[RMDB]
RNA sequence: GGGAACGACUCGAGUAGAGUCGAAAACUGGCAUCAAGGGAGAUCACUUCACCGUUGACAGAGAAAAAGAUCUGAAGGAGACUCCAGCAGUGGUAAAGCCUGUUAUUGAGGAGACAAGAAUCAGCAACUUACGUUUUUAUUUCGAUAAAAACGUAAGAAAAGAAACAACAACAACAAC
Reactivity to DMS in 0.01 (KOAc 150mM, MgCl2 10mM, bicine 150mM(pH8.5), 24C), signal-to-noise 7, nucleotides 027 to 126: c050u000g010g020c050a090u000c070a080a120g010g010g010a060g010a110u000c100a100c060u000u000c020a080c070c080g010u000u000g010a100c110a070g010a140g000a080a100a090a130a100g010a070u000c050u000g010a050a060g000g010a250g000a080c030u000c030c050a070g010c080a030g010u010g010g000u000a060a080a120g000c040c020u000g020u010u000a110u010u000g010a070g010g000a090g020a060c070a050a120g000a100a080u010c040a040g000c120a080a130
Reactivity to 2A3 in 0.01 (KOAc 150mM, MgCl2 10mM, bicine 150mM(pH8.5), 24C), signal-to-noise 4, nucleotides 027 to 126: c010u020g050g010c000a040u030c060a150a060g050g040g010a060g020a090u060c030a040c080u060u030c030a030c020c030g070u020u040g050a040c040a040g070a020g120a080a180a010a020a030g070a090u040c030u060g020a020a000g050g050a060g030a040c010u000c000c000a010g000c010a020g040u100g030g050u100a050a030a010g050c000c010u030g030u050u020a120u070u110g080a070g020g020a050g040a020c030a070a020g020a080a050u080c020a010g030c000a010a060